[RMDB]
RNA sequence: GGGAACGACUCGAGUAGAGUCGAAAAGCUGCUCUACAGGCUCCUGCUCAGCAUCCUCAGCCUCCUCAGGCUGCGCUUGUUGCUGCCGUUCAGGCUGCUCAGGCUGCUCAGGCUGUUCAGGCUGUUCGCACACCUCACGUUUCGACGUGAGGUGUGCAAAAGAAACAACAACAACAAC
Reactivity to 2A3 in 0.01 (KOAc 150mM, MgCl2 10mM, bicine 150mM(pH8.5), 24C), signal-to-noise 1, nucleotides 027 to 126: g000c010u040g000c020u030c040u170a080c060a040g060g020c050u090c040c040u030g020c010u000c020a030g010c020a040u060c020c000u000c000a000g020c000c000u010c020c000u040c010a050g150g000c030u010g000c000g000c020u010u010g110u120u100g040c030u040g000c000c020g100u140u260c150a010g000g000c000u020g000c020u000c000a020g010g000c030u040g060c030u060c030a010g120g000c000u020g030u030u060c010a030g010g040c020u030g080u050u140c070
Structure probing data (2A3) for a 177-nucleotide construct. Conditions: 150 mM KOAc, 10 mM MgCl2 and 150 mM bicine (pH 8.5), 24 C. 2A3 is a SHAPE reagent: it acylates the 2'-hydroxyl of flexible nucleotides of all four kinds. Values cover nucleotides 27 to 126. 2A3 adducts were read by reverse transcription with SuperScript II with manganese.